[RMDB]
RNA sequence: GGGAACGACUCGAGUAGAGUCGAAAAGAUAUGGAGAUAGCUUUUGACGCCUGAAAUGUCGGAAACGACAUAUAAGGGCGAUAAGUCAUCUCCUAAGUCAAAAGUGCUGAACUUCGGUUCAGCACAACCUAAAGAACAACUUCGGUUGUUCUUUAGGAAAAGAAACAACAACAACAAC
Reactivity to 2A3 in 0.01 (KOAc 150mM, MgCl2 10mM, bicine 150mM(pH8.5), 24C), signal-to-noise 4, nucleotides 027 to 126: g010a020u060a040u130g000g000a000g000a010u020a040g000c010u060u140u110u230g230a150c050g010c000c010u000g020a130a090a000u010g000u000c010g000g010a060a060a030c000g000a010c010a000u050a010u010a030a020g020g000g000c010g000a010u010a000a000g010u020c020a000u000c010u000c000c000u020a110a020g050u010c040a020a030a090a170g000u010g010c010u010g000a010a010c000u050u130c300g150g000u010u000c000a010g000c000a000c000a000a000
Reactivity to DMS in 0.01 (KOAc 150mM, MgCl2 10mM, bicine 150mM(pH8.5), 24C), signal-to-noise 6, nucleotides 027 to 126: g000a030u000a300u000g000g010a010g010a010u000a050g010c010u000u000u010u010g010a140c070g020c000c000u000g000a090a090a030u000g010u000c000g000g000a100a070a150c000g010a020c000a000u010a030u010a130a300g000g000g000c000g020a030u000a010a010g020u000c020a020u000c000u010c010c000u000a030a110g000u010c020a060a050a090a100g010u000g010c000u000g000a010a000c000u010u010c180g030g000u000u000c000a000g000c000a000c000a030a060